RNA sequence: GGGAACGACUCGAGUAGAGUCGAAAACUGGUUGAAGUGGCUUCUCCUGGGCGAUCGCUCGCUGUUUUUGUGGCUGGCUUUCAGCGGGCUGGAGGAGCCGGGAGCGGAGGCGGAGGACCGAGCCAAAGACAUAGUAGGAUUUCGAUCCUACUAUGUCAAAAGAAACAACAACAACAAC
Reactivity to 2A3 in 0.01 (KOAc 150mM, MgCl2 10mM, bicine 150mM(pH8.5), 24C), signal-to-noise 7, nucleotides 027 to 126: c020u040g040g080u070u110g070a160a060g040u090g090g000c000u010u000c000u020c010c010u080g030g070g050c060g040a090u090c050g000c010u010c000g000c000u010g080u030u060u030u080u100g080u050g040g050c060u020g020g000c000u020u040u010c010a000g000c010g000g020g000c020u020g020g010a010g000g000a000g000c000c000g000g000g000a050g010c050g010g050a030g030g040c070g010g020a060g030g010a020c030c020g020a020g010c010c020a090a060a020
Reactivity to DMS in 0.01 (KOAc 150mM, MgCl2 10mM, bicine 150mM(pH8.5), 24C), signal-to-noise 5, nucleotides 027 to 126: c040u000g000g000u010u000g000a100a150g020u010g010g020c020u000u010c010u000c000c000u020g000g010g020c040g010a080u020c140g000c010u000c050g020c030u010g000u010u010u000u020u000g020u020g010g000c060u000g000g000c110u010u000u000c020a030g010c000g000g010g020c010u020g010g010a030g010g000a050g020c010c010g000g000g000a150g000c140g000g000a080g000g010c110g000g020a120g000g000a200c100c060g000a070g000c060c050a070a100a090

Chemical mapping of a 177-nucleotide RNA with 2A3 and DMS.
Conditions: 150 mM KOAc, 10 mM MgCl2 and 150 mM bicine (pH 8.5), 24 C.
It was measured as part of the RMDB libraries RFM100 and RFMREP.